[RMDB]
RNA sequence: GGGAACGACUCGAGUAGAGUCGAAAAUCAGAGUUCGCUCUGAGAUUCACCUUUGUGACCUGGAGCUGUCUUCAAGAGGAUCACCCAUUGGGUGAUCUCCCCACCUUGAGGGCAGCGUUGAAAGGUCACUCUGGUCUGCUGGUCGAUUCGUCGACAACGAUUAUUUGCAUUUCGAUGCAAAUAAUCGAAAAGAAACAACAACAACAAC
Reactivity to DMS in 0.01 (KOAc 150mM, MgCl2 10mM, bicine 150mM(pH8.5), 24C), signal-to-noise 2, nucleotides 027 to 156: u000c000a020g000a010g040u000u000c280g020c010u000c010u000g000a020g020a290u010u000c040a110c010c020u000u000u000g000u010g010a020c010c010u000g010g020a300g000c020u000g010u000c000u020u000c000a020a040g020a290g010g000a050u000c010a000c000c000c000a300u000u010g050g020g010u000g020a010u000c040u010c230c070c050c070a300c230c010u000u000g000a010g000g010g000c010a030g030c030g010u000u000g000a100a130a110g000g010u010c010a000c000u010c040u010g040g000u000c030u000g000c020u000g000g010u000c000g010a260u000u000c090g020u010c030g000a150c040a120a270
Reactivity to 2A3 in 0.01 (KOAc 150mM, MgCl2 10mM, bicine 150mM(pH8.5), 24C), signal-to-noise 4, nucleotides 027 to 156: u020c000a000g000a010g020u120u110c160g110c080u000c000u000g010a020g010a050u160u150c050a030c010c010u000u020u020g010u000g010a000c000c000u000g010g040a030g020c000u000g000u000c000u010u000c000a000a000g000a020g030g000a000u000c000a000c010c000c120a300u260u300g010g000g000u000g000a010u000c020u030c020c010c000c000a040c000c000u000u000g000a000g000g000g000c010a000g020c010g000u020u010g000a020a010a000g000g000u000c000a010c000u000c000u000g040g000u030c050u130g070c030u120g000g060u010c020g040a110u070u030c160g100u020c010g140a020c030a060a030
Overview
An RNA of 207 nucleotides, treated with DMS and 2A3 and read out base by base. DMS (dimethyl sulfate) methylates the pairing face of unpaired adenines and cytosines. Reactivities are given for positions 27 through 156. The DMS profile rests on 4,614 reads. Conditions: 150 mM KOAc, 10 mM MgCl2 and 150 mM bicine (pH 8.5), 24 C. It was measured as part of the RMDB library RNAMAK.